[RMDB]
RNA sequence: GGGAACGACUCGAGUAGAGUCGAAAAGAUAUGGAUCCGACGGGAGCUCCUGGUCGGAAACGACCACGAGCAUCGAUCGCGGAUCCUAAGUCAAAGGACAUUGAAAUCUUCGGAUUUCAAUGUCCAACCUUUACCACGUGUUCGCACGUGGUAAAGGAAAAGAAACAACAACAACAAC
Reactivity to DMS in 0.01 (KOAc 150mM, MgCl2 10mM, bicine 150mM(pH8.5), 24C), signal-to-noise 2, nucleotides 027 to 126: g010a020u000a020u010g030g010a000u000c000c000g000a160c000g000g000g000a030g030c010u000c000c130u000g000g000u000c000g010g010a000a000a000c000g010a020c000c000a010c210g000a030g030c000a220u010c210g000a150u000c000g000c000g000g000a010u000c000c000u000a010a030g000u010c010a100a130a170g000g010a020c000a000u000u000g000a010a000a000u000c000u000u000c200g030g000a000u000u000u010c000a010a000u010g010u000c000c000a020a020
Reactivity to 2A3 in 0.01 (KOAc 150mM, MgCl2 10mM, bicine 150mM(pH8.5), 24C), signal-to-noise 2, nucleotides 027 to 126: g000a000u010a010u050g010g000a000u000c030c030g150a290c020g300g000g000a010g030c000u010c010c010u000g000g000u000c000g000g000a000a010a000c000g010a010c000c010a010c010g000a000g020c000a050u300c030g000a010u010c010g010c000g020g000a000u000c010c000u000a000a000g000u000c000a080a040a120g010g000a010c000a000u000u010g010a020a000a010u020c020u070u110c300g060g000a000u000u030u020c000a000a000u000g000u000c010c000a000a000
Chemical mapping of a 177-nucleotide RNA with DMS and 2A3.
Reactivities are rounded to 0.1 and cut off at 0 and 3.
It was measured as part of the RMDB library TTRDEL.
For 2A3, 6,100 sequencing reads were counted.
The reactions ran in a buffer of 150 mM KOAc, 10 mM MgCl2 and 150 mM bicine (pH 8.5), at 24 C.
2A3 is a SHAPE reagent: it acylates the 2'-hydroxyl of flexible nucleotides of all four kinds.
Reactivities are given for positions 27 through 126.